[RMDB]
RNA sequence: GGGAACGACUCGAGUAGAGUCGAAAACGGUUCGUCGGCGAUGCCGCACAAGAUGAACACCCGCAGCUGCGAACGGGUCAACGGGCUGCAGGUUGUGCUACGCGGCUAUGCAUCCAUGGUGGCCGAGCUAGCUACCAGUUUUCGAACUGGUAGCUAGAAAAGAAACAACAACAACAAC
Reactivity to 2A3 in 0.01 (KOAc 150mM, MgCl2 10mM, bicine 150mM(pH8.5), 24C), signal-to-noise 3, nucleotides 027 to 126: c020g040g000u190u200c020g010u020c040g060g000c030g020a060u140g020c010c010g040c020a050c040a090a090g040a180u210g040a050a000c010a030c010c010c010g000c010a010g000c010u300g120c040g050a130a040c050g100g030g130u090c040a060a060c030g020g010g020c000u000g010c000a040g020g000u150u180g030u050g010c020u050a050c100g000c000g010g000c000u030a050u170g010c000a020u040c040c010a060u130g000g010u030g040g000c020c010g010a020g030
Reactivity to DMS in 0.01 (KOAc 150mM, MgCl2 10mM, bicine 150mM(pH8.5), 24C), signal-to-noise 3, nucleotides 027 to 126: c050g030g000u000u000c050g010u000c080g000g000c050g020a130u010g010c040c040g020c030a150c170a080a100g010a140u000g030a070a020c030a040c010c000c010g020c010a010g010c010u010g000c040g010a090a070c100g000g000g010u000c070a110a150c030g000g000g000c010u000g010c000a030g000g010u000u010g040u000g000c050u000a100c150g020c030g000g000c020u000a140u040g010c050a090u000c030c040a170u010g000g010u010g010g000c030c020g010a150g020

The record gives the reactivity of an RNA of 177 nucleotides to 2A3 and DMS. The 2A3 profile rests on 4,938 reads. Reactivities are given for positions 27 through 126. The reactions ran in a buffer of 150 mM KOAc, 10 mM MgCl2 and 150 mM bicine (pH 8.5), at 24 C.